Overview:
An RNA of 177 nucleotides, treated with DMS and 2A3 and read out base by base. Values cover nucleotides 27 to 126. Conditions: 150 mM KOAc, 10 mM MgCl2 and 150 mM bicine (pH 8.5), 24 C. For 2A3, 8,888 sequencing reads were counted. DMS (dimethyl sulfate) methylates the pairing face of unpaired adenines and cytosines.

[RMDB]
RNA sequence: GGGAACGACUCGAGUAGAGUCGAAAAGAUAUGGAGUUGUUUGCAAUGAAGGUGCGAAGAACUUAAUCGGAAACGAUUAAGGGAGCACCUCAUCAACUCCUAAGUCAAAGCCGACUUCGGUCGGCAACUCACUGUAACAGUUCGCUGUUACAGUGAGAAAAGAAACAACAACAACAAC
Reactivity to DMS in 0.01 (KOAc 150mM, MgCl2 10mM, bicine 150mM(pH8.5), 24C), signal-to-noise 4, nucleotides 027 to 126: g010a070u000a300u020g000g010a010g000u000u000g000u020u000u000g020c300a150a100u010g010a100a040g020g000u000g000c000g000a060a140g000a150a190c000u000u000a000a000u000c020g020g000a140a050a180c010g010a030u000u000a000a010g000g000g010a040g030c010a000c000c000u000c010a010u010c010a000a020c000u000c000c000u000a040a110g010u000c020a100a120a170g000c000c000g000a010c000u000u020c190g030g000u000c000g000g010c000a010a030
Reactivity to 2A3 in 0.01 (KOAc 150mM, MgCl2 10mM, bicine 150mM(pH8.5), 24C), signal-to-noise 5, nucleotides 027 to 126: g010a020u080a050u160g010g010a020g000u030u030g070u140u300u300g200c120a090a090u180g160a300a050g000g010u010g000c040g150a300a020g000a060a020c000u000u000a000a000u000c010g010g020a050a040a030c010g000a010u000u010a000a000g000g000g000a000g010c000a000c000c000u010c000a010u010c010a000a000c000u000c000c000u010a100a020g030u010c050a090a100a060g000c000c010g000a000c000u040u050c260g130g000u010c000g000g000c000a000a000